[RMDB]
RNA sequence: GGGAACGACUCGAGUAGAGUCGAAAAGGUUCUCAGAUGUGAUUACCUCAGGUAAGCAGGCUAGAGACAUAACAAUCAGAAUAUUAAAGGAUGUUAUCACAGUUUUGUGAGCAGGGACCUAUUCGAACACCGAGGUUCUAUUCGUAGAACCUCGGUGAAAAGAAACAACAACAACAAC
Reactivity to DMS in 0.01 (KOAc 150mM, MgCl2 10mM, bicine 150mM(pH8.5), 24C), signal-to-noise 2, nucleotides 027 to 126: g010g000u040u000c000u000c010a020g000a140u050g000u010g020a060u020u010a030c010c000u020c210a160g030g030u000a050a120g000c070a010g030g000c010u000a170g000a040g000a020c170a120u030a020a010c080a090a100u040c080a050g020a070a040u060a020u040u030a100a060a080g000g000a090u020g000u000u040a170u000c000a010c010a140g020u050u000u040u000g010u000g010a000g000c000a090g000g000g020a040c070c020u010a140u000u010c120g000a150a070
Reactivity to 2A3 in 0.01 (KOAc 150mM, MgCl2 10mM, bicine 150mM(pH8.5), 24C), signal-to-noise 2, nucleotides 027 to 126: g130g000u080u110c000u020c060a030g090a120u090g010u100g080a060u140u020a010c000c000u160c000a000g060g000u010a020a000g000c000a010g020g050c000u080a020g000a040g000a150c010a000u210a140a270c070a230a000u030c000a110g120a230a110u120a020u300u300a040a160a160g120g080a010u000g000u000u300a060u050c010a020c070a100g010u050u100u180u230g000u070g000a000g010c000a000g000g100g000a030c000c010u020a000u060u010c000g070a070a000